This 207-nucleotide RNA was probed chemically with DMS and 2A3.
The DMS profile rests on 4,643 reads.
It was measured as part of the RMDB library OK3TST.

RNA sequence: GGGAACGACUCGAGUAGAGUCGAAAAUUGGGUCACCUGCUCACGCUGUAUCGCGAGGCUAUCGGCCGCACACACAUUGAUGAACAGACGUAUGGCGAGAUUACUUCAGUCAGUCAAGCGUUGGGCUACGAUACGGCCGACAUGCAGGCUACGCUGAGGUCCUCUUAUAUUUCGAUAUAAGAGGACCAAAAGAAACAACAACAACAAC
Reactivity to DMS in 0.01 (KOAc 150mM, MgCl2 10mM, bicine 150mM(pH8.5), 24C), signal-to-noise 2, nucleotides 027 to 156: u000u000g020g020g000u010c070a090c040c050u020g000c010u000c040a090c290g000c040u010g030u000a010u000c020g010c000g000a080g040g020c000u020a100u000c230g020g000c000c000g000c030a080c070a060c050a100c030a140u030u020g030a110u000g010a130a090c060a120g030a050c050g040u000a170u000g030g020c020g030a180g000a140u000u010a060c060u000u000c050a090g030u030c050a180g000u000c030a040a290g000c050g030u000u010g010g020g000c010u010a010c050g000a110u000a000c040g020g030c000c020g010a080c080a060u000g040c000a000g000g000c010u000a030c080g020c040u000g010a300
Reactivity to 2A3 in 0.01 (KOAc 150mM, MgCl2 10mM, bicine 150mM(pH8.5), 24C), signal-to-noise 4, nucleotides 027 to 156: u100u050g070g010g000u030c050a060c020c000u010g000c010u050c020a050c050g020c000u040g020u020a020u030c020g030c160g220a100g020g040c040u100a140u140c090g070g040c040c020g080c010a030c010a000c000a010c040a190u100u200g090a100u100g050a200a010c080a140g050a010c010g050u070a090u150g010g000c040g010a130g040a150u090u120a070c050u070u120c050a030g010u020c000a010g020u020c030a090a060g010c030g040u030u050g040g010g000c010u030a010c010g010a000u000a020c000g010g020c010c010g020a040c040a050u110g000c020a010g010g000c000u030a010c020g040c020u040g030a010
The RNA was probed in 150 mM KOAc, 10 mM MgCl2 and 150 mM bicine (pH 8.5) at 24 C.